[RMDB]
RNA sequence: GGGAACGACUCGAGUAGAGUCGAAAAUCCUAAGUCGGAGAGGGAGAAUCUGAAUGGGACGAUGAGCAUUCGGAAACGAAUGCGAGUCCCGCGAUUCUUUGAUCUCUCCGAUAUGGAAAAACACUCCGUUCGGUAGUUCGCUACCGAACGGAGUGAAGACGUAUCCUUCGUUCGCGAAGGAUACGUCAAAAGAAACAACAACAACAAC
Reactivity to 2A3 in 0.01 (KOAc 150mM, MgCl2 10mM, bicine 150mM(pH8.5), 24C), signal-to-noise 1, nucleotides 027 to 156: u000c020c010u020a080a020g030u000c000g000g000a030g010a020g000g030g010a010g010a010a000u010c090u300g130a300a270u300g000g000g010a020c050g170a300u280g080a010g000c010a000u000u000c000g040g020a080a040a060c010g000a010a000u000g000c010g000a020g000u010c000c000c000g000c000g000a000u010u000c000u220u060u010g110a140u030c000u010c000u000c000c000g000a000u020a010u000g000g020a070a160a000a000a000c010a010c000u010c000c000g000u000u000c060g000g010u000a010g030u060u070c300g050c130u000a000c000c000g010a000a000c000g000g000a000g000u000g000a000a020